RNA sequence: GGGAACGACUCGAGUAGAGUCGAAAACGAGCCUUACCGACACUGAUGAGCCAAGAGGAACUUGGAGGCACCCAGGAAUUUCACCCGGGUCGACCUGGGCGGCUAGGAGCCGUGCACAGGGCGUCGCUGUGGAGCGAGCCUGGCCUCCAAGGGGCCUGAAUAUAACUUACUUCGGUAAGUUAUAUUCAAAAGAAACAACAACAACAAC
Reactivity to DMS in 0.01 (KOAc 150mM, MgCl2 10mM, bicine 150mM(pH8.5), 24C), signal-to-noise 1, nucleotides 027 to 156: c000g000a130g020c050c020u000u000a150c020c030g020a060c060a200c090u010g010a060u000g040a090g020c020c020a050a100g010a160g030g000a190a120c030u000u000g000g000a050g000g020c090a100c300c060c000a050g040g000a060a110u020u000u010c070a080c040c020c020g030g030g010u000c000g020a040c000c020u000g010g110g010c010g030g000c000u000a220g100g020a290g090c030c010g010u000g010c090a130c060a040g000g020g000c010g080u010c030g030c050u030g010u080g000g020a080g010c060g000a210g000c030c010u000g010g000c010c010u000c030c020a030a040g000g020g020g020c030c040u000
Reactivity to 2A3 in 0.01 (KOAc 150mM, MgCl2 10mM, bicine 150mM(pH8.5), 24C), signal-to-noise 6, nucleotides 027 to 156: c040g030a020g040c010c030u070u110a080c040c040g070a030c030a030c140u150g060a150u070g050a080g030c040c020a110a050g060a040g120g030a060a040c010u000u000g010g000a010g010g010c040a070c030c070c010a020g000g030a040a080u090u170u110c010a010c000c000c010g020g010g030u000c000g000a010c000c000u000g020g000g000c000g010g000c010u120a190g150g260a050g040c010c010g050u150g080c110a050c000a300g010g000g000c000g010u010c010g010c110u050g060u300g040g020a050g090c120g010a000g000c000c000u000g010g010c000c000u000c000c000a000a000g010g000g030g000c000c010u010

Chemical mapping of a 207-nucleotide RNA with DMS and 2A3. High DMS reactivity at an A or C suggests that its Watson-Crick edge is free. The 2A3 profile rests on 5,793 reads. The DMS profile rests on 2,432 reads. For DMS the reverse transcriptase was MarathonRT. Values cover nucleotides 27 to 156. Conditions: 150 mM KOAc, 10 mM MgCl2 and 150 mM bicine (pH 8.5), 24 C. For 2A3 the reverse transcriptase was SuperScript II with manganese.